The record gives the reactivity of an RNA of 177 nucleotides to DMS and 2A3. The 2A3 profile rests on 3,844 reads. Conditions: 150 mM KOAc, 10 mM MgCl2 and 150 mM bicine (pH 8.5), 24 C. Reactivities are given for positions 27 through 126. For 2A3 the reverse transcriptase was SuperScript II with manganese. For DMS the reverse transcriptase was MarathonRT.

[RMDB]
RNA sequence: GGGAACGACUCGAGUAGAGUCGAAAAUUACCUCCCUUCGGGGAGGUAAACUGAACGCUGCAAGCGGCAGCGCGCUCGCUUGCGCACACACGCACAAAAAAAGCAGUAUGCACUUCGGUGCAUACAAGGCGUAUAUACGUUUCGACGUAUAUACGCCAAAAGAAACAACAACAACAAC
Reactivity to DMS in 0.01 (KOAc 150mM, MgCl2 10mM, bicine 150mM(pH8.5), 24C), signal-to-noise 2, nucleotides 027 to 126: u010u000a020c000c000u010c000c000c000u000u010c210g030g000g040g000a010g020g010u000a000a000a100c120u000g000a130a030c120g010c030u000g020c010a010a020g010c020g000g030c010a110g000c180g000c170g010c020u010c060g010c030u000u000g010c010g000c000a110c140a140c140a090c040g010c070a060c150a000a000a010a050a050a110a150g010c140a060g020u000a000u000g000c000a010c000u000u010c140g040g010u000g000c010a000u000a010c010a050a040
Reactivity to 2A3 in 0.01 (KOAc 150mM, MgCl2 10mM, bicine 150mM(pH8.5), 24C), signal-to-noise 2, nucleotides 027 to 126: u020u010a010c000c000u000c000c020c000u020u060c230g070g000g010g000a010g000g000u000a000a000a000c010u020g050a080a010c070g020c090u190g000c030a020a030g020c000g070g000c020a040g280c060g030c070g010c110u070c030g000c020u010u030g000c010g000c000a000c010a000c000a010c030g130c050a050c100a070a110a000a030a010a010a030g030c060a030g000u010a000u000g010c000a010c010u000u080c220g080g000u010g000c000a000u010a000c000a000a010